[RMDB]
RNA sequence: GGGAACGACUCGAGUAGAGUCGAAAAGAAAGCAAGAAAGAAGCCGGCUCUGCUAGUUUCACGGCAACCACGUUGAAAUUACAACGAAAGAAGCUCGCACUCAACUUCAACGGCUUAACGAGUGCAAAAAAGAAGUAUCACUUCGGUGAUACUUCAAUCUACACAGACUGUUCGCAGUCUGUGUAGAAAAAGAAACAACAACAACAAC
Reactivity to 2A3 in 0.01 (KOAc 150mM, MgCl2 10mM, bicine 150mM(pH8.5), 24C), signal-to-noise 1, nucleotides 027 to 156: g060a040a120a000g050c050a060a000g020a210a130a000g080a170a000g030c070c010g000g010c010u010c020u020g030c010u010a010g040u050u020u130c120a070c050g030g000c040a050a110c020c000a020c020g000u000u000g050a100a110a140u160u080a170c020a050a010c030g030a030a080a120g020a020a000g040c090u190c160g040c030a010c000u000c000a000a120c000u090u030c000a070a030c010g000g000c010u050u040a020a000c060g000a000g010u060g000c070a000a000a000a000a070a110g000a000a000g010u000a000u000c000a010c000u020u060c180g020g020u000g010a000u000a000c000u000u010c010a020a000